[RMDB]
RNA sequence: GGGAACGACUCGAGUAGAGUCGAAAAUUGUUUGAAGGGACCAAGGUGGUGCCCUUACAAUCAGACUUCAAGUACAUACACUGUGUGGCUAGUAUGUUCGCUCACAAUGGAUAAUGCCAUGUCAAGGAUAGGCAGUCUAUUUCGAUAGACUGCCUAUAAAAGAAACAACAACAACAAC
Reactivity to DMS in 0.01 (KOAc 150mM, MgCl2 10mM, bicine 150mM(pH8.5), 24C), signal-to-noise 3, nucleotides 027 to 126: u020u000g000u000u000u020g010a070a020g020g000g010a080c010c010a190a200g040g010u010g020g020u010g010c010c000c000u000u000a040c010a010a030u000c020a120g000a100c100u000u010c080a080a100g010u000a050c040a020u000a050c030a100c110u000g020u000g030u010g000g000c030u000a130g010u000a020u010g030u000u010c120g010c040u010c070a050c140a070a040u010g010g010a120u000a050a100u000g020c010c010a020u000g020u020c110a070a130g010g000
Reactivity to 2A3 in 0.01 (KOAc 150mM, MgCl2 10mM, bicine 150mM(pH8.5), 24C), signal-to-noise 1, nucleotides 027 to 126: u000u010g030u030u010u100g030a030a000g000g020g010a020c040c040a060a070g300g000u210g170g000u230g190c000c000c000u000u000a030c050a040a010u050c010a010g030a020c000u000u120c220a100a020g040u000a070c000a080u080a060c030a030c090u050g020u030g010u060g090g000c020u020a000g030u040a020u060g100u030u070c060g030c060u080c020a160c030a000a070u040g060g000a060u060a180a050u180g040c020c010a020u080g000u100c080a060a030g030g050